[RMDB]
An RNA of 177 nucleotides, treated with 2A3 and DMS and read out base by base.
RNA sequence: GGGAACGACUCGAGUAGAGUCGAAAAGAUAUGGAUAUCAUAUGAACUACUUCGCGACUUCGGAAACGAAGUCCGAAGCAUAUGCCGAGUCCUAAGUCAAACCUACCGAACUUCGGUUCGGUAGGAACAUACAACUCCCGUUCGCGGGAGUUGUAUGAAAAGAAACAACAACAACAAC
Reactivity to 2A3 in 0.01 (KOAc 150mM, MgCl2 10mM, bicine 150mM(pH8.5), 24C), signal-to-noise 3, nucleotides 027 to 126: g020a020u100a050u180g000g010a020u050a010u220c000a000u020a010u060g010a080a100c070u230a060c000u300u030c020g070c240g010a010c000u010u010c010g030g010a050a050a070c010g010a010a020g020u030c000c000g000a000a010g060c010a000u020a010u000g100c100c060g070a100g080u000c000c010u010a130a010g060u090c040a060a040a190c000c000u000a030c000c000g000a010a000c010u050u150c300g100g000u000u000c000g000g010u000a000g000g010a000a010
Reactivity to DMS in 0.01 (KOAc 150mM, MgCl2 10mM, bicine 150mM(pH8.5), 24C), signal-to-noise 3, nucleotides 027 to 126: g000a060u000a290u000g010g000a050u010a070u010c020a010u010a010u000g000a050a100c100u010a300c020u000u000c000g020c170g000a010c000u010u000c000g010g000a100a050a170c000g010a040a000g000u000c000c000g010a010a000g020c000a010u000a010u000g020c300c140g000a150g020u000c000c000u000a080a190g000u010c060a100a070a200c010c000u000a010c000c000g000a010a000c000u000u010c230g030g010u000u000c000g010g010u000a000g000g000a020a030
For 2A3, 3,521 sequencing reads were counted.